[RMDB]
RNA sequence: GGGAACGACUCGAGUAGAGUCGAAAAAAGGGGUUCGCCCCUUGGAAACCGUAGGGCAUGAAGCCCUGGUGGUCAACAGCAAAGCUUCGAAAGAGGCUUUGACAUGACCACCCUGGCUGAACAUGCCCUAAACGGGCAUGACGUCAUUCGUGACGAAACACCACCAGUAAUUCGUUACUGGUGGUGUAAAAGAAACAACAACAACAAC
Reactivity to 2A3 in 0.01 (KOAc 150mM, MgCl2 10mM, bicine 150mM(pH8.5), 24C), signal-to-noise 2, nucleotides 027 to 156: a000a000g080g000g000g000u150u090c200g220c030c000c020c030u020u020g050g060a200a130a030c010c000g000u010a020g000g000g000c010a000u010g040a080a010g000c000c000c000u000g010g000u000g000g000u000c040a090a090c020a190g010c000a010a000a020g000c000u000u020c020g070a080a070a030g000a000g000g000c000u000u010u000g020a030c010a020u070g000a000c010c000a000c010c000c000u010g000g000c010u000g030a050a010c000a010u000g000c010c000c010u000a000a010a000c000g000g000g020c080a140u220g130a080c010g000u000c010a060u080u090c210g150u060g000a000c110g040a050a010
Reactivity to DMS in 0.01 (KOAc 150mM, MgCl2 10mM, bicine 150mM(pH8.5), 24C), signal-to-noise 3, nucleotides 027 to 156: a020a030g010g000g030g020u000u010c240g050c000c000c010c020u020u000g010g010a120a040a050c000c000g010u000a080g000g030g000c010a040u000g010a130a050g010c000c000c040u010g000g080u000g000g010u000c010a060a150c080a190g020c000a000a010a010g010c000u000u000c010g000a160a130a300g000a020g040g020c010u000u000u000g000a030c070a300u000g000a030c020c000a010c010c000c020u000g000g060c010u000g010a130a210c000a020u000g010c000c000c000u000a000a010a020c050g070g000g000c080a080u000g000a160c000g010u000c000a130u010u010c290g020u000g020a040c010g010a110a190

This 207-nucleotide RNA was probed chemically with 2A3 and DMS. The reactions ran in a buffer of 150 mM KOAc, 10 mM MgCl2 and 150 mM bicine (pH 8.5), at 24 C. It was measured as part of the RMDB library RNAMAK. The DMS profile rests on 7,469 reads. Reactivities are given for positions 27 through 156. For 2A3 the reverse transcriptase was SuperScript II with manganese.